RNA sequence: GGGAACGACUCGAGUAGAGUCGAAAAAUCAUACUGUAGUCUUAACCUUCAAUGAGUCAAUAUCGUUAGGCUCAUGUGACACCUGACGCACUCGUUCAGACUACAGUAUGUGUACGGUCCUUCAAUCAGGUGUCACAUGAGCCUGAUAGAAGGACAAGCUCACCAUUAGUUUCGACUAAUGGUGAGCAAAAGAAACAACAACAACAAC
Reactivity to 2A3 in 0.01 (KOAc 150mM, MgCl2 10mM, bicine 150mM(pH8.5), 24C), signal-to-noise 2, nucleotides 027 to 156: a000u100c010a020u000a020c030u000g000u000a000g000u000c000u040u000a030a040c060c010u200u200c130a210a200u230g000a020g070u070c030a140a060u070a080u250c020g000u040u100a000g000g010c020u010c000a010u020g000u000g000a000c000a000c000c000u030g070a150c150g040c200a070c060u130c100g060u040u090c090a010g000a000c000u000a000c000a000g000u000a000u000g000u000g000u020a070c080g020g140u070c010c020u060u110c170a160a170u030c000a010g000g000u000g000u000c010a000c000a000u000g000a000g000c000c000u000g000a000u000a000g030a000a010g060g000a020c070a120a030